[RMDB]
Annotation:
An RNA of 207 nucleotides, treated with DMS and 2A3 and read out base by base. DMS adducts were read by reverse transcription with MarathonRT. The RNA was probed in 150 mM KOAc, 10 mM MgCl2 and 150 mM bicine (pH 8.5) at 24 C.
RNA sequence: GGGAACGACUCGAGUAGAGUCGAAAAGGUAAUGGACGACGGCGGCGUGUGGCGAACAGGGAUACCGGUAGUCAGUGUCUGGAACAUCCCAAGGGGCGGCAGAGCUAGCACCCCGACACGUUAAGGCAAAACUUCGCACGGUUCGCCGUGCGAAGAAUCAAUUCUAUGUGUUCGCACAUAGAAUUGAAAAAGAAACAACAACAACAAC
Reactivity to DMS in 0.01 (KOAc 150mM, MgCl2 10mM, bicine 150mM(pH8.5), 24C), signal-to-noise 1, nucleotides 027 to 156: g060g010u000a040a060u000g000g000a080c020g010a080c020g010g010c050g020g020c030g000u000g000u000g010g020c050g010a040a100c070a110g000g010g030a130u010a070c040c070g030g050u000a050g000u000c070a080g010u020g010u010c020u000g010g000a110a060c100a150u000c030c020c030a110a150g000g010g040g030c020g000g060c040a120g010a110g020c100u000a080g010c030a080c000c010c000c010g000a080c050a050c060g020u010u000a050a090g000g010c020a050a040a100a140c010u000u000c000g000c000a030c020g010g020u000u010c300g050c000c000g020u000g010c020g000a020a000g010a050a080
Reactivity to 2A3 in 0.01 (KOAc 150mM, MgCl2 10mM, bicine 150mM(pH8.5), 24C), signal-to-noise 2, nucleotides 027 to 156: g070g020u110a080a070u110g000g010a020c020g000a010c030g030g020c020g030g010c020g000u060g040u060g020g040c040g000a040a000c030a070g010g010g020a010u040a070c020c010g040g040u060a020g060u050c100a040g030u010g030u060c010u030g000g020a060a060c030a070u040c010c000c000a040a050g010g010g000g000c080g030g000c030a020g040a030g200c040u070a030g000c010a060c000c010c010c000g010a000c010a010c040g090u120u120a060a020g030g010c030a030a010a060a100c010u000u000c000g000c000a000c010g040g020u020u030c150g000c110c000g000u010g010c010g000a000a000g020a000a010